Source: RMDB library OK2TRN, as collected in RNAgym. An RNA of 177 nucleotides, treated with 2A3 and DMS and read out base by base.

RNA sequence: GGGAACGACUCGAGUAGAGUCGAAAAUCGAAGAGGUCAACCUGGAUGAAGAUCUGACUAUAUUUAUGAAAGAUAAGGCACUGUCUCCUAUUAGGGCAGAAUGGGAUACUGUUUACCCGCAAGAGAACCUCACUCUAUCUUUCGAGAUAGAGUGAGGAAAAGAAACAACAACAACAAC
Reactivity to 2A3 in 0.01 (KOAc 150mM, MgCl2 10mM, bicine 150mM(pH8.5), 24C), signal-to-noise 3, nucleotides 027 to 126: u110c030g000a070a020g050a020g020g050u050c030a040a020c020c040u080g080g040a140u080g030a040a040g030a080u000c020u080g040a040c040u080a080u040a140u300u270u040a170u140g060a060a090a030g060a040u080a090a070g050g000c030a000c070u030g050u000c040u030c040c010u050a120u190u190a050g000g020g000c010a010g030a050a030u030g020g000g010a020u030a120c000u010g010u030u020u030a080c030c030c010g040c030a040a010g100a000g010a190a090
Reactivity to DMS in 0.01 (KOAc 150mM, MgCl2 10mM, bicine 150mM(pH8.5), 24C), signal-to-noise 3, nucleotides 027 to 126: u000c060g000a120a090g030a140g020g000u000c050a080a120c050c010u010g000g000a110u010g010a100a100g000a030u000c080u000g010a170c040u000a100u000a040u000u010u010a100u040g010a100a080a070g010a070u010a050a110g000g010c050a090c070u000g020u000c020u000c030c020u000a070u000u000a050g000g000g010c040a030g000a050a030u000g000g000g000a070u000a050c040u000g020u000u000u000a120c030c020c000g020c190a050a110g000a110g000a050a150
For DMS the reverse transcriptase was MarathonRT. The 2A3 profile rests on 1,730 reads. The reactions ran in a buffer of 150 mM KOAc, 10 mM MgCl2 and 150 mM bicine (pH 8.5), at 24 C.